[RMDB]
RNA sequence: GGGAACGACUCGAGUAGAGUCGAAAAACUGUCGACGACCAAUAGCACGGUUGCUUCGUUGUCCACGUCGACCUCGACCGGCAUCAGCUCGCUGUCCACCGGCCUGAGCACCACCGACAGCAACCUAUACCGUCACGUACUUCGGUACGUGACGGUAAAAAGAAACAACAACAACAAC
Reactivity to 2A3 in 0.01 (KOAc 150mM, MgCl2 10mM, bicine 150mM(pH8.5), 24C), signal-to-noise 1, nucleotides 027 to 126: a040c030u030g000u010c000g020a020c020g000a050c010c160a140a100u160a100g060c090a030c090g080g000u020u060g030c040u010u030c010g190u060u160g020u080c120c060a130c060g030u010c000g010a070c000c000u000c010g070a090c030c020g030g010c040a090u070c000a070g000c090u220c090g070c000u020g070u030c000c020a040c000c050g010g060c050c010u140g020a040g050c060a010c000c000a060c000c000g010a030c010a000g020c040a020a010c000c000u010a030
Reactivity to DMS in 0.01 (KOAc 150mM, MgCl2 10mM, bicine 150mM(pH8.5), 24C), signal-to-noise 1, nucleotides 027 to 126: a040c040u010g070u000c000g020a070c000g010a260c290c060a030a040u010a110g010c140a090c040g000g010u000u000g000c020u000u000c100g000u000u000g040u000c000c130a050c040g000u000c040g020a030c020c030u000c010g040a050c030c000g040g040c280a050u010c080a020g020c050u010c270g000c040u000g010u000c120c200a090c070c040g030g000c020c030u000g010a000g030c100a270c090c040a050c150c080g000a030c030a010g010c000a040a010c030c000u000a260
Structure probing data (2A3 and DMS) for a 177-nucleotide construct. It was measured as part of the RMDB library OK2TST. The reactions ran in a buffer of 150 mM KOAc, 10 mM MgCl2 and 150 mM bicine (pH 8.5), at 24 C.